[RMDB]
RNA sequence: GGGAACGACUCGAGUAGAGUCGAAAAUCGGACACGGCCACGAUUCUCGGCCUCAACGACUGGUCGACGCCGUUGCAGGUCUGGCAGGAAAAGACGAGCACGGUGCCGCCGGAUGAUUCGGACACGUCGGAGGCGGCGCACUGGGGCAACGUCCUGGUCAUCGAGUUGAAUUCGUUCAACUCGAUGAAAAAGAAACAACAACAACAAC
Reactivity to DMS in 0.01 (KOAc 150mM, MgCl2 10mM, bicine 150mM(pH8.5), 24C), signal-to-noise 2, nucleotides 027 to 156: u000c050g010g010a150c030a150c080g010g030c000c020a150c010g000a140u000u000c000u000c000g030g000c000c000u000c030a060a060c040g000a080c040u000g060g060u010c050g030a120c110g030c020c000g020u000u000g000c100a100g020g020u000c020u020g030g040c050a110g000g000a130a060a120a090g010a040c000g020a290g000c040a090c090g020g000u000g000c030c010g000c000c010g000g030a200u000g000a090u000u000c060g050g030a130c080a100c130g050u010c010g020g020a300g000g020c000g010g000c000g000c010a030c040u010g030g000g030g040c010a110a090c040g010u000c000c010u000g030g040
Reactivity to 2A3 in 0.01 (KOAc 150mM, MgCl2 10mM, bicine 150mM(pH8.5), 24C), signal-to-noise 3, nucleotides 027 to 156: u050c020g000g020a010c050a040c130g080g030c010c000a040c050g020a070u140u030c040u020c060g000g030c020c000u010c000a050a080c050g110a080c080u070g030g070u110c040g020a020c040g010c020c000g000u020u040g040c070a020g010g020u000c050u070g060g070c020a080g050g040a060a100a010a020g050a010c020g000a020g000c010a000c020g010g010u010g030c020c010g000c000c000g010g030a090u150g010a020u040u130c120g090g000a040c050a010c190g090u050c010g010g050a000g020g000c000g000g000c030g030c010a020c040u030g010g000g090g020c030a080a140c040g000u000c010c020u050g050g040